[RMDB]
RNA sequence: GGGAACGACUCGAGUAGAGUCGAAAAGCAAGGAACUGGUCGCCCGGUCCAGCGACUUUCUCGAUGGGCAACUGGACUUCCGCGGACAACUGGCGGUGCGCAGCCACCUGCUCAUGUGCGGGCAUUGUUGUAAUGAGGAGUUCGCUCCUCAUUACAAAAAAGAAACAACAACAACAAC
Reactivity to DMS in 0.01 (KOAc 150mM, MgCl2 10mM, bicine 150mM(pH8.5), 24C), signal-to-noise 5, nucleotides 027 to 126: g010c090a080a100g010g010a080a090c090u000g000g020u000c040g010c020c030c020g000g000u020c010c020a130g010c090g010a100c070u000u000u020c040u000c040g010a080u020g020g000g010c050a100a090c070u010g000g000a090c050u000u040c030c030g030c050g010g000a080c130a060a080c100u010g000g010c040g000g030u010g000c080g000c090a080g000c040c020a080c050c030u010g020c010u000c060a060u020g030u020g000c050g000g000g000c100a060u000u010g010
Reactivity to 2A3 in 0.01 (KOAc 150mM, MgCl2 10mM, bicine 150mM(pH8.5), 24C), signal-to-noise 5, nucleotides 027 to 126: g050c040a030a090g040g040a070a080c020u050g020g010u040c020g040c010c020c020g040g020u030c000c000a000g000c000g040a030c010u040u100u010c060u020c030g140a160u180g010g030g010c030a060a070c050u040g020g030a050c000u060u000c020c010g020c040g030g050a080c040a130a050c090u070g040g000c020g000g030u030g010c090g000c030a020g020c020c000a040c000c010u060g010c010u020c070a060u080g060u100g060c010g010g010g000c020a060u000u170g050
An RNA of 177 nucleotides, treated with DMS and 2A3 and read out base by base. 2A3 adducts were read by reverse transcription with SuperScript II with manganese. The data come from the RNA Mapping Database (RMDB), libraries RFM100 and RFMREP.